[RMDB]
The record gives the reactivity of an RNA of 207 nucleotides to 2A3. The 2A3 profile rests on 1,362 reads. Values cover nucleotides 27 to 156. 2A3 adducts were read by reverse transcription with SuperScript II with manganese. The data come from the RNA Mapping Database (RMDB), library OK3TST.
RNA sequence: GGGAACGACUCGAGUAGAGUCGAAAAUCACAUCCAGUAACUGGUCCUAUCCGCUGGCCGAAGACGUCGCUGACGGCCCGCUCCAGGACGUGCGCCUAGUCCUGCGCAGCGUCCGCGACGGAAUCCAAUCCUGGCAGCAACACGACAUCACCAUCGAGCCAAAGGUUUUAUUCGUAAAACCUUUGGCAAAAGAAACAACAACAACAAC
Reactivity to 2A3 in 0.01 (KOAc 150mM, MgCl2 10mM, bicine 150mM(pH8.5), 24C), signal-to-noise 2, nucleotides 027 to 156: u070c030a010c030a130u050c010c020a020g070u100a140a120c060u050g030g000u040c000c010u020a070u040c030c070g030c040u040g070g000c000c000g060a040a010g070a040c010g000u000c000g000c020u040g010a030c000g150g060c040c060c070g020c040u080c040c040a000g000g010a000c000g050u100g030c060g030c010c020u030a030g030u020c000c000u020g000c010g000c030a050g020c010g000u010c000c010g000c010g030a000c000g010g010a010a040u040c020c010a030a060u050c000c020u050g020g000c000a000g000c000a000a000c020a000c010g060a010c020a030u070c010a010c080c000a030u300c200g060a050